[RMDB]
RNA sequence: GGGAACGACUCGAGUAGAGUCGAAAACAGUGUAACACUUUCUCCCGAUUUUGUCCUGGUCUACGGGCUGGGAGCGCUCCCAUUGAUGACCCUGGUGCUCUUCCUCAGGAAGGUCAUGGUCCGCUGGUAGUUUGCACGAGUUCGCUCGUGCAAACUAAAAAGAAACAACAACAACAAC
Reactivity to DMS in 0.01 (KOAc 150mM, MgCl2 10mM, bicine 150mM(pH8.5), 24C), signal-to-noise 1, nucleotides 027 to 126: c190a050g010u000g000u010a110a140c090a050c030u000u000u000c200u000c010c010c020g000a210u020u020u060u000g010u000c000c000u000g000g000u000c040u000a110c180g090g030g020c020u000g000g000g000a110g000c120g010c020u000c000c010c000a140u010u000g010a080u000g000a020c010c000c290u000g000g010u000g020c100u000c030u000u010c030c020u000c240a130g020g010a050a020g000g000u000c010a040u000g000g030u000c030c110g000c080u000g030g050